[RMDB]
Background: An RNA of 177 nucleotides, treated with DMS and read out base by base. Source: RMDB library OK2TST, as collected in RNAgym. The DMS profile rests on 517 reads. The reactions ran in a buffer of 150 mM KOAc, 10 mM MgCl2 and 150 mM bicine (pH 8.5), at 24 C.
RNA sequence: GGGAACGACUCGAGUAGAGUCGAAAACUUGAUGCAGUUGUUAUUAUUGUUGAUAAUAACACCGAGCAACCACAAUUCUUCCGUUGUUCAUGCACCAAGGAAGCUUCAACAUCUGCUGCCGCCGCCAGACUGGUAGCGGAUUCGUCCGCUACCAGUCAAAAGAAACAACAACAACAAC
Reactivity to DMS in 0.01 (KOAc 150mM, MgCl2 10mM, bicine 150mM(pH8.5), 24C), signal-to-noise 1, nucleotides 027 to 126: c030u010u000g000a030u000g000c020a160g000u020u000g000u000u000a000u000u000a010u000u000g020u030u030g030a180u000a010a000u000a000a000c010a020c300c220g000a090g010c010a020a060c040c120a080c250a060a150u000u010c240u010u020c210c100g030u000u030g030u010u010c020a300u020g000c010a010c000c030a040a090g010g060a050a080g010c150u000u030c020a030a130c070a040u000c030u000g010c100u010g020c000c030g080c050c020g020c120c100a130